This 177-nucleotide RNA was probed chemically with DMS and 2A3. For 2A3, 2,910 sequencing reads were counted. 2A3 adducts were read by reverse transcription with SuperScript II with manganese. It was measured as part of the RMDB library OK2TRN. The DMS profile rests on 3,897 reads.

RNA sequence: GGGAACGACUCGAGUAGAGUCGAAAAUUCACAGUCCACUGCCCUAUAACUGCUGGAUAUUAGUUUUUAGGUAAGAGAUGUUAUUAGAGACAAUUGGCUAACCCACACUCAUAUUGGAGACUAAAAGCUGCCUCUUAUAAUUCGUUAUAAGAGGCAGAAAAGAAACAACAACAACAAC
Reactivity to DMS in 0.01 (KOAc 150mM, MgCl2 10mM, bicine 150mM(pH8.5), 24C), signal-to-noise 5, nucleotides 027 to 126: u000u010c060a090c100a090g000u000c030c060a060c060u000g000c030c020c030u010a100u000a080a080c050u010g010c090u010g000g010a060u000a090u010u000a040g010u000u000u000u010u010a030g000g010u000a050a080g000a080g010a050u000g000u010u000a110u000u000a080g000a080g010a050c060a050a110u000u000g010g000c040u010a060a090c070c030c060a060c120a070c050u000c040a070u000a110u010u000g000g000a110g020a100c110u000a050a060a090a140g010
Reactivity to 2A3 in 0.01 (KOAc 150mM, MgCl2 10mM, bicine 150mM(pH8.5), 24C), signal-to-noise 3, nucleotides 027 to 126: u080u030c040a020c020a080g040u050c050c020a080c060u040g050c030c000c030u090a110u050a160a070c020u020g030c020u030g040g070a060u040a070u190u070a020g020u000u000u020u080u140a060g020g000u020a060a040g010a000g010a090u040g020u080u050a100u080u150a040g030a010g000a070c050a080a160u080u100g040g010c000u020a030a080c010c000c000a010c000a010c010u040c030a030u060a110u190u150g090g010a030g010a020c020u070a000a190a000a000g040